[RMDB]
RNA sequence: GGGAACGACUCGAGUAGAGUCGAAAACAAGGCGGCCGAUGAUGCGAUUGCGAGGAACGAAACGCACCGCGCACAAAAGGCGGCAAGAUACGCCGAGGCGUAUGCGGAACCAGACUUGAGAAAGCGAAUCAAAGCAUUUAUUCGUAAAUGCUUUGAUAAAAGAAACAACAACAACAAC
Reactivity to 2A3 in 0.01 (KOAc 150mM, MgCl2 10mM, bicine 150mM(pH8.5), 24C), signal-to-noise 7, nucleotides 027 to 126: c030a020a040g110g000c050g070g000c020c020g040a080u080g020a060u050g020c020g040a060u030u070g010c010g020a080g050g080a210a110c110g060a230a070a020c000g010c000a010c030c080g030c000g000c040a010c030a070a100a010a010g030g000c000g000g000c020a020a030g050a050u070a030c030g000c010c020g010a090g060g000c010g000u020a020u080g120c040g020g020a010a020c020c010a050g070a150c030u060u060g010a030g090a120a060a010g070c060g050a010
Reactivity to DMS in 0.01 (KOAc 150mM, MgCl2 10mM, bicine 150mM(pH8.5), 24C), signal-to-noise 9, nucleotides 027 to 126: c060a120a140g010g020c030g010g030c020c020g000a170u000g010a100u000g010c020g010a170u010u000g000c020g010a110g010g020a100a140c210g010a060a110a130c040g010c020a040c080c130g010c010g010c040a040c090a050a050a120a190g000g010c000g000g020c050a070a060g000a080u000a050c030g000c010c020g000a110g020g010c040g010u000a030u000g010c040g010g000a090a110c050c030a080g010a080c050u000u000g000a150g000a080a060a070g010c080g010a120
Chemical mapping of a 177-nucleotide RNA with 2A3 and DMS. It was measured as part of the RMDB library OK2TRN. The RNA was probed in 150 mM KOAc, 10 mM MgCl2 and 150 mM bicine (pH 8.5) at 24 C. For 2A3 the reverse transcriptase was SuperScript II with manganese. Reactivities are rounded to 0.1 and cut off at 0 and 3.